[RMDB]
RNA sequence: GGGAACGACUCGAGUAGAGUCGAAAAUAUAUAAGAACACAGCGAUCACUGUUCUAACGGCAGUCAGUUGCAGCCAUGCACGCUAUACGCAUGCUGCUGCUGGCUGUCGCUGUGCUGAUAGCUUCAGCUACACCAAUUAGUUCGCUAAUUGGUGUAGAAAAGAAACAACAACAACAAC
Reactivity to DMS in 0.01 (KOAc 150mM, MgCl2 10mM, bicine 150mM(pH8.5), 24C), signal-to-noise 9, nucleotides 027 to 126: u010a090u010a120u010a110a080g010a080a080c040a050c090a060g010c050g010a070u010c100a120c120u010g010u000u000c080u010a060a100c020g010g000c010a000g010u000c000a010g010u000u000g000c000a010g010c180c080a010u000g010c000a140c220g010c180u010a100u010a120c200g000c000a010u000g000c000u000g000c000u000g000c000u000g000g000c000u000g000u000c010g010c020u000g010u000g000c080u000g000a060u000a080g010c070u000u000c090a100g000
Reactivity to 2A3 in 0.01 (KOAc 150mM, MgCl2 10mM, bicine 150mM(pH8.5), 24C), signal-to-noise 9, nucleotides 027 to 126: u120a010u050a010u020a060a070g050a080a010c050a000c020a040g040c020g070a050u110c030a050c120u050g050u090u030c070u090a120a040c020g010g000c010a000g000u000c000a000g000u010u010g010c000a000g080c160c030a010u010g000c020a030c120g130c110u170a100u100a300c130g000c000a000u010g000c000u000g000c000u000g000c000u000g000g000c000u000g000u000c000g000c000u000g000u010g010c020u020g030a050u040a080g030c000u060u050c020a010g020